Source: RMDB library OK1LIB, as collected in RNAgym. This 177-nucleotide RNA was probed chemically with 2A3 and DMS. For 2A3 the reverse transcriptase was SuperScript II with manganese. The RNA was probed in 150 mM KOAc, 10 mM MgCl2 and 150 mM bicine (pH 8.5) at 24 C. The DMS profile rests on 1,564 reads.
[RMDB]
RNA sequence: GGGAACGACUCGAGUAGAGUCGAAAAAUCAGAGACCUGUCUAACUUGACAAUAAACAUUGACAGAUUUGUGAUAGUCGGUAAGAUACAUGACAGCUGCGCAGCAUCACUUCACGCGCUGUCAUCGGUGAUCGCCACUUAUUCGUAAGUGGCGAUCAAAAAGAAACAACAACAACAAC
Reactivity to 2A3 in 0.01 (KOAc 150mM, MgCl2 10mM, bicine 150mM(pH8.5), 24C), signal-to-noise 2, nucleotides 027 to 126: a000u070c000a020g030a000g030a090c020c020u020g030u060c060u070a060a190c090u080u190g200a090c050a040a050u240a070a030a050c080a030u230u270g070a040c000a030g090a120u040u000u000g170u010g010a070u010a060g070u040c020g000g000u000a030a020g050a080u110a090c030a000u040g000a000c000a000g010c010u260g000c070g000c020a110g070c050a120u170c130a030c050u070u070c120a000c000g000c000g000c000u000g000u000c000a000u000c000g020g080
Reactivity to DMS in 0.01 (KOAc 150mM, MgCl2 10mM, bicine 150mM(pH8.5), 24C), signal-to-noise 2, nucleotides 027 to 126: a030u000c070a060g000a020g000a040c000c010u050g000u000c000u020a080a150c110u040u000g010a080c300a060a210u030a080a200a070c160a090u040u020g000a080c070a000g010a070u000u000u000g040u000g000a010u000a030g000u040c040g020g000u000a150a020g000a110u010a120c080a030u010g020a000c020a000g010c000u050g090c000g000c200a090g000c210a010u000c230a040c270u040u000c130a280c000g030c020g070c020u000g010u010c000a000u000c050g020g050